[RMDB]
RNA sequence: GGGAACGACUCGAGUAGAGUCGAAAAGACCUCGUCGGUGUCCAGAUGGCCGACGGGAAGGUCGAGGUCGAGUACCUCGAGGAGAUCACCUACGAGGACUCACGCAGCGUGCGCGGCAAGUUGACGCUGCAGAUCGGCCGGCCCGACGCCGAACGCGGCCUGUCGUAGUCUUCGGACUACGACAGGCAAAAGAAACAACAACAACAAC
Reactivity to 2A3 in 0.01 (KOAc 150mM, MgCl2 10mM, bicine 150mM(pH8.5), 24C), signal-to-noise 1, nucleotides 027 to 156: g060a030c010c020u030c000g000u010c010g130g010u060g010u060c060c010a090g070a150u200g040g000c060c000g010a010c020g010g000g000a020a060g040g000u000c000g000a040g040g080u230c140g020a040g060u130a300c000c000u000c000g000a000g040g000a100g040a150u230c210a090c140c000u150a240c010g000a020g020g010a020c000u010c000a010c110g010c000a010g000c000g100u180g170c080g000c020g150g070c150a210a060g040u050u120g050a000c020g020c020u010g010c000a010g020a040u060c000g000g030c050c070g000g010c010c060c000g000a010c000g000c000c000g010a160a020c070g020c070g030
Source information:
Structure probing data (2A3) for a 207-nucleotide construct. Reactivities are rounded to 0.1 and cut off at 0 and 3. Reactivities are given for positions 27 through 156. 2A3 adducts were read by reverse transcription with SuperScript II with manganese.